[RMDB]
Structure probing data (2A3 and DMS) for a 177-nucleotide construct.
The DMS profile rests on 1,898 reads.
The reactions ran in a buffer of 150 mM KOAc, 10 mM MgCl2 and 150 mM bicine (pH 8.5), at 24 C.
The 2A3 profile rests on 1,696 reads.
RNA sequence: GGGAACGACUCGAGUAGAGUCGAAAAGGGCAUGCAAGGGAGGUGUGGUUCGCUUCUUCAGUGCCCCGCUGCUCAAACCUCUGGGGGAGCAUACAGACGGGCAGGCUGUGGGGCUCCAAACCCACGGGGGUAAAUCACCAUUCGUGGUGAUUUACCCAAAAGAAACAACAACAACAAC
Reactivity to 2A3 in 0.01 (KOAc 150mM, MgCl2 10mM, bicine 150mM(pH8.5), 24C), signal-to-noise 3, nucleotides 027 to 126: g000g010g020c010a010u050g050c100a090a050g040g080g000a090g030g020u050g010u070g060g110u080u110c040g010c050u000u030c000u040u070c080a070g050u030g010c000c030c000c000g020c030u050g000c010u040c060a170a290a210c020c020u080c100u140g000g000g020g040g000a060g000c030a010u070a050c050a000g090a040c110g010g010g020c040a030g010g000c010u020g010u010g020g000g070g000c010u040c030c010a150a110a040c000c010c020a030c030g100g000
Reactivity to DMS in 0.01 (KOAc 150mM, MgCl2 10mM, bicine 150mM(pH8.5), 24C), signal-to-noise 1, nucleotides 027 to 126: g000g000g040c000a010u010g060c130a150a170g000g000g040a030g010g000u000g010u010g000g040u000u050c110g000c000u050u000c070u010u000c020a130g010u020g000c030c020c000c060g000c080u010g030c020u050c030a000a140a210c110c020u000c060u000g000g000g000g030g030a050g000c000a050u000a110c040a050g020a070c070g010g010g020c060a090g000g000c040u000g040u000g000g000g000g010c030u000c020c120a020a070a180c070c000c000a100c160g040g010